[RMDB]
RNA sequence: GGGAACGACUCGAGUAGAGUCGAAAAAGUGGAUACGUCCACAUUUAACAACCAUGUUCACUUUCCACUUGAGAAGACACAAAAAUUGUCUUGUCGCUUUAGGAUAAUGUGUUGACUCGCAGGAACUAGUUGCAAUGAACGGCGAUUAAAUUGGUCUGUUUUUUUGUUGGUUAAGCAUGGUAGAUAACGUUUGUUCAAACAAUAGCUUAAAGUGACAUGGUUUUGCCUAUGUUUAUGGUAAAAGCAUCGAUAGAGCUGUACAUUUAAAGGCUAUGUUCGCAUAGCCUAAAAGAAACAACAACAACAAC
Reactivity to 2A3 in 0.01 (KOAc 150mM, MgCl2 10mM, bicine 150mM(pH8.5), 24C), signal-to-noise 2, nucleotides 027 to 266: a010g000u000g000g000a000u000a130c190g110u010c030c000a000c000a010u140u140u100a050a050c000a010a000c010c010a020u020g010u100u080c020a000c010u060u030u080c000c020a130c080u160u130g020a030g000a010a050g050a010c020a000c020a040a130a070a150a220u120u020g000u000c020u010u070g140u080c050g040c170u170u190u090a020g010g000a030u060a090a070u050g020u020g010u020u010g030a020c030u010c050g070c060a110g040g000a010a050c020u070a060g150u070u120g030c040a000a080u050g010a070a000c030g000g010c000g000a010u020u220a040a100a190u130u070g160g030u020c040u020g120u050u080u010u000u000u030u000g140u050u050g100g040u100u040a040a000g030c050a070u040g040g030u090a070g050a100u050a050a040c010g030u080u170u300g040u150u050c010a020a100a120c040a030a090u020a070g000c050u080u080a070a000a000g020u010g040a010c000a020u000g000g020u000u000u000u000g000c000c000u040a070u120g080u020u180u040a080u090g030g010u060a030a090a080a080g000c000a060u060c100g100a080u050a130g070a010g060c060u050g100u140a050c020a100u230u190u050a180a140
Reactivity to DMS in 0.01 (KOAc 150mM, MgCl2 10mM, bicine 150mM(pH8.5), 24C), signal-to-noise 4, nucleotides 027 to 266: a100g010u000g000g010a010u000a080c210g030u010c010c000a010c020a090u010u000u020a110a110c180a050a030c010c000a020u000g000u010u000c020a020c000u000u000u000c030c020a160c190u010u010g010a030g020a050a300g000a020c010a010c040a060a090a130a170a150u010u000g010u010c000u000u000g020u000c210g000c300u010u010u010a020g000g000a020u000a040a070u010g010u000g010u000u010g010a300c020u000c020g030c300a110g010g010a040a080c050u000a050g010u010u020g000c050a030a040u010g000a010a020c050g000g000c020g000a020u010u010a020a090a130u010u000g010g010u010c040u010g010u000u000u010u000u020u010u000g020u020u000g010g000u000u000a030a050g000c000a070u000g010g010u000a040g010a130u020a050a050c070g010u010u010u020g020u000u000c080a070a080a090c040a050a070u010a050g020c040u010u010a030a020a020g010u000g000a030c030a000u000g000g000u000u000u000u000g000c000c000u000a040u000g010u000u000u000a020u010g000g020u000a030a050a080a040g010c010a030u000c080g000a210u020a080g010a060g000c020u010g000u000a030c130a050u000u000u010a050a110

The record gives the reactivity of an RNA of 307 nucleotides to 2A3 and DMS. The reactions ran in a buffer of 150 mM KOAc, 10 mM MgCl2 and 150 mM bicine (pH 8.5), at 24 C. The data come from the RNA Mapping Database (RMDB), library POS240. For DMS the reverse transcriptase was MarathonRT.